RNA sequence: GGGAACGACUCGAGUAGAGUCGAAAAUCGGUUCUUCUUCGAUCCGGACCGGCUCAUCUCGGCAAAGGGCGGCAGUCCUCAGUACUCUUACUCUUUCCUAUAAAGAGGAGACUGCUGGACUCGCCGCGAACCCUUUACUUCGGUAAAGGGAAAAGAAACAACAACAACAAC
Reactivity to 2A3 in 0.01 (KOAc 150mM, MgCl2 10mM, bicine 150mM(pH8.5), 24C), signal-to-noise 9, nucleotides 027 to 129: u060c000g000g000u020u000c010u150u040c040u150u190c150g020a030u010c010c010g010g020a020c030c010g000g000c000u000c010a130u030c020u000c000g030g000c070a090a070a070g130g060g000c000g000g000c000a010g000u000c000c000u000c000a020g000u120a300c020u000c020u060u130a250c010u010c010u030u090u040c050c060u160a170u250a270a030a000g000a000g010g000a000g000a010c000u010g020c080u010g000g000a000c000u010c040g000c000c000g000c000g000a000a000
Reactivity to DMS in 0.01 (KOAc 150mM, MgCl2 10mM, bicine 150mM(pH8.5), 24C), signal-to-noise 8, nucleotides 027 to 129: u030c020g000g000u060u000c020u020u010c130u060u050c200g000a020u020c020c010g070g000a110c080c000g050g000c020u020c030a140u020c010u030c020g000g040c130a050a090a090g060g030g010c030g040g000c030a000g010u000c020c010u000c020a030g000u040a200c040u000c000u030u090a300c010u020c030u010u030u000c170c190u070a120u110a110a020a020g030a010g000g000a030g000a030c020u010g010c120u000g000g020a030c010u020c090g020c050c010g010c030g010a030a070